This 177-nucleotide RNA was probed chemically with DMS and 2A3. The reactions ran in a buffer of 150 mM KOAc, 10 mM MgCl2 and 150 mM bicine (pH 8.5), at 24 C. For DMS the reverse transcriptase was MarathonRT. Reactivities are given for positions 27 through 126. The data come from the RNA Mapping Database (RMDB), library RFM100.
[RMDB]
RNA sequence: GGGAACGACUCGAGUAGAGUCGAAAAGGUAAGAGCUGAAUGCAUCUAAGCUCGAAACCCACCUGGAAAAGAAGCACCACUGAGACCGCUCGUAGAAGACGAGUUCGAUAGACUUGGGGUGUACGCGCCUGAAGCGGGCAUUCGUGCCCGCUUCAGGAAAAGAAACAACAACAACAAC
Reactivity to DMS in 0.01 (KOAc 150mM, MgCl2 10mM, bicine 150mM(pH8.5), 24C), signal-to-noise 1, nucleotides 027 to 126: g000g000u000a010a270g000a000g000c110u060g000a140a110u000g000c060a200u000c060u000a160a260g000c000u000c000g000a170a160a100c000c000c050a100c060c000u000g000g000a180a000a050a220g000a100a140g000c020a000c000c000a000c000u000g000a000g000a120c040c060g000c000u070c020g010u000a210g170a240a220g000a070c000g000a110g000u000u000c000g120a210u290a140g000a090c010u000u000g020g030g000g000u000g000u000a000c190g020c240g000
Reactivity to 2A3 in 0.01 (KOAc 150mM, MgCl2 10mM, bicine 150mM(pH8.5), 24C), signal-to-noise 1, nucleotides 027 to 126: g010g070u000a030a020g000a010g000c000u000g000a100a080u120g050c060a040u030c000u030a010a010g000c000u010c000g000a200a000a000c000c000c000a000c000c000u040g190g060a050a020a000a070g090a120a000g090c000a000c000c000a170c190u050g000a000g000a060c000c000g000c000u000c000g010u080a060g050a300a000g050a040c000g000a000g000u120u130c140g000a260u170a090g020a040c000u000u010g070g000g000g010u100g000u180a060c150g010c000g040